[RMDB]
RNA sequence: GGGAACGACUCGAGUAGAGUCGAAAAGGAACGGUGAAGUCGCGAUUGCACUACGCCGUGCGCGCGUUGCGGCUCACUCUGCAGGAACUGGGAGUUACUCGAUGACGGCAGAGCCCAUUCGCAUGGCCUUGCUCAGCAACUUCGGUUGCUGAGCAAGAAAAGAAACAACAACAACAAC
Reactivity to DMS in 0.01 (KOAc 150mM, MgCl2 10mM, bicine 150mM(pH8.5), 24C), signal-to-noise 1, nucleotides 027 to 126: g020g000a070a060c050g040g010u000g010a120a050g020u010c000g000c020g000a160u010u000g060c060a050c080u000a080c130g010c080c000g030u000g010c100g040c180g040c010g020u000u020g000c070g010g000c050u000c050a050c000u000c040u000g000c080a030g000g000a130a040c040u010g010g000g000a170g000u000u000a030c060u000c030g000a070u020g000a280c090g000g000c040a050g000a090g020c030c000c010a110u010u010c060g010c030a020u000g020g000c000
Reactivity to 2A3 in 0.01 (KOAc 150mM, MgCl2 10mM, bicine 150mM(pH8.5), 24C), signal-to-noise 1, nucleotides 027 to 126: g050g000a050a000c050g030g050u070g050a050a020g000u010c050g000c030g120a180u080u300g030c020a020c060u180a080c110g010c020c000g000u010g000c060g000c010g000c030g030u040u060g000c010g010g050c000u000c030a020c000u020c000u010g060c020a000g010g080a060a030c040u080g040g000g000a120g090u200u150a080c000u000c000g160a150u060g020a020c000g030g000c050a020g010a020g030c000c000c000a040u080u070c040g000c050a010u010g000g050c000

The record gives the reactivity of an RNA of 177 nucleotides to DMS and 2A3. It was measured as part of the RMDB library OK2TST.